RNA sequence: GGGAACGACUCGAGUAGAGUCGAAAACGCUACUAUGGCCGCUCGAUGCUGACUUACGCUUUAUACGAAGCGCAGAACGCGGGUAUGGAGCAUUGCUACUACUUCUGUUCACUGGACCCAUCCGAGAAAAUGGAGGGAACUUCGGUUCCCUCCAUUUAAAAGAAACAACAACAACAAC
Reactivity to DMS in 0.01 (KOAc 150mM, MgCl2 10mM, bicine 150mM(pH8.5), 24C), signal-to-noise 2, nucleotides 027 to 126: c090g000c030u000a110c020u000a020u000g000g020c000c030g030c020u000c070g010a220u000g040c020u020g000a150c080u000u000a070c080g030c050u000u010u010a130u030a090c150g010a040a030g000c020g000c120a060g000a100a220c160g020c070g000g000g020u000a030u000g010g000a050g000c040a050u010u000g010c080u000a080c030u000a030c050u000u000c080u030g000u030u000c030a100c040u010g000g000a190c010c020c020a110u010c050c050g000a190g030a090
Reactivity to 2A3 in 0.01 (KOAc 150mM, MgCl2 10mM, bicine 150mM(pH8.5), 24C), signal-to-noise 1, nucleotides 027 to 126: c010g040c110u110a140c010u030a150u080g000g160c000c020g000c020u000c010g100a130u140g020c030u020g070a300c060u110u110a020c080g040c040u080u170u060a130u000a050c050g020a040a000g000c020g090c030a010g030a140a010c050g010c020g060g020g070u010a020u030g030g010a020g000c010a030u000u140g040c010u020a160c030u010a040c000u030u030c010u010g070u000u000c070a110c060u090g040g070a030c000c020c070a020u080c060c030g010a050g110a100